[RMDB]
RNA sequence: GGGAACGACUCGAGUAGAGUCGAAAAGAGCUAAUAUCUACUUCGUUUGUGCAUAUCACUAUAGGGAAGCUGAUGGGUUGCGAGAAACGUUCAAGCUCGCAGUGCCUAGUGGAAUGAACGGCUCGAAGGGUAAAGAAUACUUCGGUAUUCUUUACCCAAAAGAAACAACAACAACAAC
Reactivity to DMS in 0.01 (KOAc 150mM, MgCl2 10mM, bicine 150mM(pH8.5), 24C), signal-to-noise 5, nucleotides 027 to 126: g010a040g020c020u010a110a090u030a050u000c020u020a130c030u000u000c040g000u020u010u010g000u020g000c180a110u050a120u020c030a050c030u010a090u030a100g010g010g010a040a030g020c100u000g000a070u020g000g000g000u010u000g000c000g000a020g020a050a040a070c220g000u020u000c120a080a110g000c010u000c020g000c000a020g010u010g010c000c020u010a050g010u010g000g000a090a090u010g000a060a050c070g010g010c010u000c030g010a090a060
Reactivity to 2A3 in 0.01 (KOAc 150mM, MgCl2 10mM, bicine 150mM(pH8.5), 24C), signal-to-noise 4, nucleotides 027 to 126: g040a000g010c050u040a110a020u060a120u180c020u030a020c030u080u030c040g250u030u060u090g070u050g030c060a030u040a030u210c020a020c030u080a030u150a130g060g030g040a060a000g030c030u050g030a090u080g010g030g000u050u000g000c020g000a030g040a020a100a000c050g020u040u030c070a040a010g000c010u000c000g020c010a020g060u060g090c000c010u020a030g030u030g080g030a020a020u070g020a080a010c030g040g000c000u000c020g000a100a060

The data come from the RNA Mapping Database (RMDB), library OK1LIB. Structure probing data (DMS and 2A3) for a 177-nucleotide construct. 2A3 adducts were read by reverse transcription with SuperScript II with manganese. Values cover nucleotides 27 to 126. The RNA was probed in 150 mM KOAc, 10 mM MgCl2 and 150 mM bicine (pH 8.5) at 24 C.